[RMDB]
RNA sequence: GGGAACGACUCGAGUAGAGUCGAAAAGAACGCGACGAGAUGAACAAUAUCAUCAAGGAGCUUGUCAACGAAAAGGACGAAAUGAGCGCAAUGAUGACCAAAUUGUGCUCGGAAAAAGACCAACUGAACGCCAUGGUUGACAAACUGGCUGCCAAGACACUCCUAAUCCAUUCGUGGAUUAGGAGUGAAAAGAAACAACAACAACAAC
Reactivity to DMS in 0.01 (KOAc 150mM, MgCl2 10mM, bicine 150mM(pH8.5), 24C), signal-to-noise 3, nucleotides 027 to 156: g010a130a100c070g010c060g060a130c040g000a300g030a050u000g010a030a140c040a130a170u010a280u010c010a030u000c030a100a160g030g010a130g030c080u000u000g010u010c000a060a090c000g020a140a050a080a200g020g040a090c020g010a090a110a110u000g010a030g000c020g000c030a020a010u000g010a100u010g010a160c170c140a070a090a010u000u000g020u010g000c000u000c000g000g000a070a050a060a070a070g000a150c030c060a060a190c080u000g020a080a080c020g000c020c010a050u000g010g000u000u000g000a030c030a020a040a060c040u000g020g010c010u000g010c070c020a050a160g000a220
Reactivity to 2A3 in 0.01 (KOAc 150mM, MgCl2 10mM, bicine 150mM(pH8.5), 24C), signal-to-noise 5, nucleotides 027 to 156: g060a070a010c050g010c020g040a030c030g010a020g010a060u030g010a040a020c090a210a080u130a110u240c030a000u000c000a020a050g030g000a010g000c000u010u020g010u010c010a010a020c040g100a050a050a050a070g030g010a030c030g030a090a020a130u150g010a000g000c000g000c010a010a020u030g020a090u130g060a120c040c050a080a130a050u010u000g010u020g000c000u000c000g000g020a080a070a000a000a000g070a040c030c040a030a080c090u100g030a080a020c030g010c020c020a040u100g100g010u000u040g010a020c000a030a060a020c060u030g050g000c030u050g040c020c010a040a000g030a020

Chemical mapping of a 207-nucleotide RNA with DMS and 2A3. For DMS the reverse transcriptase was MarathonRT. Conditions: 150 mM KOAc, 10 mM MgCl2 and 150 mM bicine (pH 8.5), 24 C.